This 177-nucleotide RNA was probed chemically with 2A3. The 2A3 profile rests on 502 reads.

[RMDB]
RNA sequence: GGGAACGACUCGAGUAGAGUCGAAAAUUGUAAAAACAAUGCGUGCUGCUGGUGCAGAUGUUCAAUAUGUAAGUAUUCCAUCAAACGGUGUAUGGUAUGACCACAUUGGUAUCGAUAAAGAACGUCGCGGUGGUACAUCGUUCGCGAUGUACCACCGAAAAGAAACAACAACAACAAC
Reactivity to 2A3 in 0.01 (KOAc 150mM, MgCl2 10mM, bicine 150mM(pH8.5), 24C), signal-to-noise 1, nucleotides 027 to 126: u130u000g200u000a180a150a020a040a000c000a000a010u180g060c060g020u080g000c000u000g000c000u080g000g140u040g050c040a000g080a000u060g000u010u030c050a060a070u050a080u130g250u080a000a080g120u060a180u050u050c000c000a100u100c140a070a070a050c090g000g070u100g020u110a010u090g030g060u070a000u220g000a010c000c000a130c000a090u050u010g020g020u020a030u080c030g050a000u100a290a130a000g040a010a000c010g000u000c000g020
Background: The reactions ran in a buffer of 150 mM KOAc, 10 mM MgCl2 and 150 mM bicine (pH 8.5), at 24 C. Source: RMDB library OK1LIB, as collected in RNAgym.